[RMDB]
RNA sequence: GGGAACGACUCGAGUAGAGUCGAAAAGUGAAAUCUCCUUCUCUCGCAAUGUGUAACUCAUGAUUCUCAUGACCCCUGGUUGGAGAGAUCCGGACUAGGAGCCAGGGGGCCUCUGAUUCUGCCAGCCAAAACUGUCGUAAGUUCGCUUACGACAGAACAAUAAUUACCGGUUCGCCGGUAAUUAUUGAAAAGAAACAACAACAACAAC
Reactivity to 2A3 in 0.01 (KOAc 150mM, MgCl2 10mM, bicine 150mM(pH8.5), 24C), signal-to-noise 4, nucleotides 027 to 156: g080u040g010a050a040a060u000c020u040c000c020u030u040c010u010c010u010c030g010c060a080a110u110g030u010g010u160a060a030c030u010c050a030u060g050a140u200u050c070u020c070a050u110g040a090c000c000c000c000u010g020g020u030u110g060g000a060g010a010g010a080u020c010c040g040g070a060c070u090a060g010g050a010g000c000c020a020g010g000g000g000g010c000c000u050c020u030g040a080u090u020c020u090g040c010c020a030g000c030c010a040a100a100a120c020u010g000u010c000g000u000a000a020g000u040u100c160g000c110u000u000a010c000g000a000c000a000g000a000a010
Reactivity to DMS in 0.01 (KOAc 150mM, MgCl2 10mM, bicine 150mM(pH8.5), 24C), signal-to-noise 1, nucleotides 027 to 156: g000u000g000a070a090a100u000c030u000c010c010u000u010c040u000c000u000c040g050c050a110a030u000g040u000g000u000a050a060c070u000c010a100u000g000a130u000u000c070u000c000a080u010g000a060c030c020c000c000u000g020g010u010u000g000g010a100g000a160g000a140u000c000c010g040g000a120c050u000a150g030g000a110g010c000c000a130g020g010g020g010g010c110c020u000c010u020g010a110u010u000c020u010g010c000c020a050g030c040c040a080a070a050a150c000u000g020u000c000g000u000a020a030g040u000u000c300g000c020u000u000a000c000g010a000c000a010g010a050a080